[RMDB]
RNA sequence: GGGAACGACUCGAGUAGAGUCGAAAAUAGCUUUGUUCUAAACACUUUUGGUAGCUUACUAGUGAUGAUCAUUUGUUACAAUGAGUAGGAGUAAAGUUUCCUAAGGAAUAAGUAGUGCUACUGCUGAGCCAUUAAAAUGAUAAUAAAUGAAAACUCAUCACGAAGACAAUUUCGAUUGUCUUCGUGAAAAAGAAACAACAACAACAAC
Reactivity to DMS in 0.01 (KOAc 150mM, MgCl2 10mM, bicine 150mM(pH8.5), 24C), signal-to-noise 2, nucleotides 027 to 156: u000a110g000c020u000u010u000g020u010u010c010u010a090a110a180c100a020c030u000u010u000u000g020g030u000a120g010c020u010u010a030c030u000a090g040u000g010a250u000g010a080u010c040a070u000u030u020g010u000u000a040c010a100a090u010g000a040g030u010a220g040g010a090g030u000a050a030a110g030u000u000u000c010c030u010a040a100g000g020a110a040u000a090a060g010u010a100g010u000g000c050u000a080c030u010g030c030u000g000a100g100c040c020a090u010u010a050a080a140a100u010g010a130u000a070a120u000a030a040a080u000g000a060a030a080a140c090u000c010a160
Reactivity to 2A3 in 0.01 (KOAc 150mM, MgCl2 10mM, bicine 150mM(pH8.5), 24C), signal-to-noise 3, nucleotides 027 to 156: u080a000g000c000u080u030u040g010u060u010c040u080a050a130a060c000a040c040u080u060u080u150g030g010u010a020g020c020u060u060a060c020u020a010g040u010g130a110u070g040a060u050c020a030u000u010u090g150u130u130a070c090a120a100u060g000a020g030u050a020g000g050a010g000u050a040a080a000g020u050u070u010c000c000u020a070a030g070g000a070a120u090a160a000g030u030a000g020u040g070c030u030a010c010u020g020c020u010g000a040g030c040c000a030u120u210a010a100a040a090u080g040a020u050a160a030u060a040a150a020u070g050a000a060a060a020c000u010c020a010